RNA sequence: GGGAACGACUCGAGUAGAGUCGAAAAUGCCAGCUCCUAGGACUUUGUUGACUAGAGGCACAUUGGAACCAGAAAAUUUCAAUAGUGUCACUAGAUUGAUGUGUAACUUAGGUCCUGACAUAUUUUUGACGACUGCGGUUCGCCGCAGUCAAAAGAAACAACAACAACAAC
Reactivity to 2A3 in 0.01 (KOAc 150mM, MgCl2 10mM, bicine 150mM(pH8.5), 24C), signal-to-noise 5, nucleotides 027 to 129: u020g000c000c000a000g010c010u020c000c000u000a020g010g010a070c040u160u190u280g010u010u020g010a010c000u010a000g000a070g030g000c000a010c010a000u000u000g000g000a000a000c040c050a100g260a100a090a010a010u000u000u000c010a010a000u050a110g000u000g000u000c000a010c030u000a030g060a300u030u090g030a030u020g140u030g030u040a090a100c030u010u010a000g000g010u020c020c000u000g020a010c020a020u060a100u060u070u020u040u050g040a040c050
Reactivity to DMS in 0.01 (KOAc 150mM, MgCl2 10mM, bicine 150mM(pH8.5), 24C), signal-to-noise 3, nucleotides 027 to 129: u010g010c030c020a020g030c110u020c000c000u080a010g010g000a070c030u040u030u040g060u010u020g010a070c030u010a040g010a060g040g040c050a000c020a050u060u000g000g000a020a000c010c080a200g000a090a170a070a210u010u010u010c020a000a000u010a160g040u000g010u000c000a110c010u050a020g010a220u010u020g030a020u000g030u020g030u050a190a080c000u000u030a030g060g000u000c170c000u050g000a090c090a000u020a000u060u020u010u020u020g040a140c000
About this RNA
This 170-nucleotide RNA was probed chemically with 2A3 and DMS. The 2A3 profile rests on 9,086 reads.